An RNA of 207 nucleotides, treated with 2A3 and read out base by base.
2A3 adducts were read by reverse transcription with SuperScript II with manganese.
For 2A3, 537 sequencing reads were counted.
[RMDB]
RNA sequence: GGGAACGACUCGAGUAGAGUCGAAAAGUGAAAGCUCCUCCUCUCGCAAUGUGUAACUCAUGAUUCUCAUGACCCCUGGUUGGAGAGAUCCGGACUAGGAGCCAGGGGGCCUCUGAUUCUGCCAGCCAAAACUGUCGUAAGUUCGCUUACGACAGAAGGACGAACUUAGUUUCGACUAAGUUCGUCCAAAAGAAACAACAACAACAAC
Reactivity to 2A3 in 0.01 (KOAc 150mM, MgCl2 10mM, bicine 150mM(pH8.5), 24C), signal-to-noise 1, nucleotides 027 to 156: g110u070g050a150a070a000g040c030u010c000c000u020c000c000u000c030u080c010g010c070a070a190u080g030u000g070u140a090a080c030u030c100a040u140g030a210u190u080c080u000c110a050u110g040a060c010c000c000c000u010g000g050u070u120g000g020a070g010a010g030a210u000c050c010g040g130a080c030u070a070g000g040a000g020c000c010a010g050g000g000g000g000c000c010u010c000u050g090a170u050u070c010u070g020c020c000a000g000c000c000a000a000a000a100c010u000g000u000c000g000u010a000a000g020u030u130c140g000c200u010u000a000c000g000a000c030a000g020a000a010